[RMDB]
This 177-nucleotide RNA was probed chemically with DMS and 2A3. Reactivities are rounded to 0.1 and cut off at 0 and 3. For DMS, 7,663 sequencing reads were counted.
RNA sequence: GGGAACGACUCGAGUAGAGUCGAAAACUAUGUACAGACAGUACAGUGGAUAAGGUCUGUCGAUAUCCAACUAUAACAAUGGUACUUGCAGUGGUAUCUAUCAAGAUAGGCAGGCUAUCAUAGAAAGAAGAUAUGUAUUAUUCGUAGUACAUAUCUUAAAAGAAACAACAACAACAAC
Reactivity to DMS in 0.01 (KOAc 150mM, MgCl2 10mM, bicine 150mM(pH8.5), 24C), signal-to-noise 5, nucleotides 027 to 126: c040u010a070u010g000u010a020c020a140g020a090c180a130g000u010a010c040a110g040u010g010g000a080u000a030a090g020g020u000c010u010g000u010c000g000a100u020a000u010c010c030a050a100c100u010a000u060a050a090c200a070a070u030g000g000u000a020c040u000u010g020c130a080g000u030g010g010u000a000u000c000u020a100u040c190a090a060g000a020u000a040g000g000c010a040g000g020c100u010a000u000c010a060u030a060g020a050a300a300g000
Reactivity to 2A3 in 0.01 (KOAc 150mM, MgCl2 10mM, bicine 150mM(pH8.5), 24C), signal-to-noise 5, nucleotides 027 to 126: c030u040a050u110g010u010a010c000a090g240a030c020a060g050u020a000c000a020g040u090g100g020a050u050a170a100g040g020u020c020u010g000u010c000g070a060u010a020u050c020c010a040a040c070u080a010u030a140a050c100a070a070u180g000g000u020a020c000u040u100g050c070a080g060u070g100g010u020a010u000c010u000a070u100c100a030a030g010a040u000a010g010g000c000a000g000g000c010u020a020u060c010a010u050a050g090a040a280a000g300